[RMDB]
RNA sequence: GGGAACGACUCGAGUAGAGUCGAAAAAUUGGUUCAACCAUUCUGGAUGUUGGCGUCGACGUUCCAAGCGUAGGUGCGGUGAUUCUGGGUGGCGGUGGCAAAGCCGAAGUUGAGAUGCGCCAACGAACGAUUAUAUGACGUUCGCGUCAUAUAAUCGAAAAGAAACAACAACAACAAC
Reactivity to 2A3 in 0.01 (KOAc 150mM, MgCl2 10mM, bicine 150mM(pH8.5), 24C), signal-to-noise 3, nucleotides 027 to 126: a010u070u060g040g000u160u180c040a070a040c020c030a060u090u030c030u060g110g080a130u090g030u030u040g040g000c030g000u070c030g040a060c010g030u130u000c050c010a060a020g030c030g030u050a060g000g040u050g010c040g030g000u040g020a110u140u010c010u070g050g060g010u040g010g000c020g020g030u040g010g050c040a020a070a030g000c020c020g040a070a030g040u080u110g040a090g000a090u090g010c010g000c010c010a030a000c010g030a050a010
Reactivity to DMS in 0.01 (KOAc 150mM, MgCl2 10mM, bicine 150mM(pH8.5), 24C), signal-to-noise 7, nucleotides 027 to 126: a100u010u010g010g010u000u010c160a130a120c040c030a080u010u000c040u010g010g010a150u000g000u000u000g010g010c030g020u000c050g030a080c050g000u000u000c050c060a090a130g010c080g020u000a050g010g010u000g020c050g000g020u000g000a070u000u010c070u000g010g010g020u010g010g010c080g000g010u010g000g020c100a040a060a150g010c020c020g010a050a090g010u010u010g010a120g010a120u000g010c060g000c020c010a030a040c050g000a060a150